[RMDB]
RNA sequence: GGGAACGACUCGAGUAGAGUCGAAAAACGCUGCUACGGCAGCGAAGGUGUCACGUCAGUGGUUUUACCCUAUGGUAGGUGACAUCAUGCUGUUCUACCACAGGGUAGAACCACGGACGGGAUGUAACCCACAAGUUCAUUUCGAUGAACUUGUGGGAAAAGAAACAACAACAACAAC
Reactivity to 2A3 in 0.01 (KOAc 150mM, MgCl2 10mM, bicine 150mM(pH8.5), 24C), signal-to-noise 3, nucleotides 027 to 126: a000c010g010c000u010g000c010u020a010c190g090g000c010a000g010c000g000a010a000g120g070u110g010u010c020a010c020g010u000c000a010g000u010g000g010u000u000u000u000a000c000c000c000u020a010u000g020g000u000a010g020g180u300g100a000c000a020u130c040a060u250g060c070u040g030u050u000c000u000a000c010c000a010c000a020g000g000g000u000a000g010a000a000c000c000a000c000g000g000a000c010g000g020g000a010u070g080u080a040a060
Reactivity to DMS in 0.01 (KOAc 150mM, MgCl2 10mM, bicine 150mM(pH8.5), 24C), signal-to-noise 2, nucleotides 027 to 126: a080c010g010c000u000g040c000u010a090c180g010g000c000a000g020c010g000a060a020g010g040u000g010u000c000a020c010g000u000c010a030g000u000g000g030u020u000u000u000a020c010c010c000u030a080u000g010g010u000a010g000g020u020g000a000c020a000u010c300a130u050g040c230u000g000u010u020c000u000a000c000c000a030c050a040g020g000g030u000a000g010a010a000c000c000a010c000g000g000a020c000g020g020g000a010u000g020u020a160a130
Structure probing data (2A3 and DMS) for a 177-nucleotide construct. Reactivities are rounded to 0.1 and cut off at 0 and 3. Source: RMDB libraries RFM100 and RFMREP, as collected in RNAgym. As a SHAPE reagent, 2A3 marks flexible, mostly unpaired nucleotides at the ribose 2'-OH.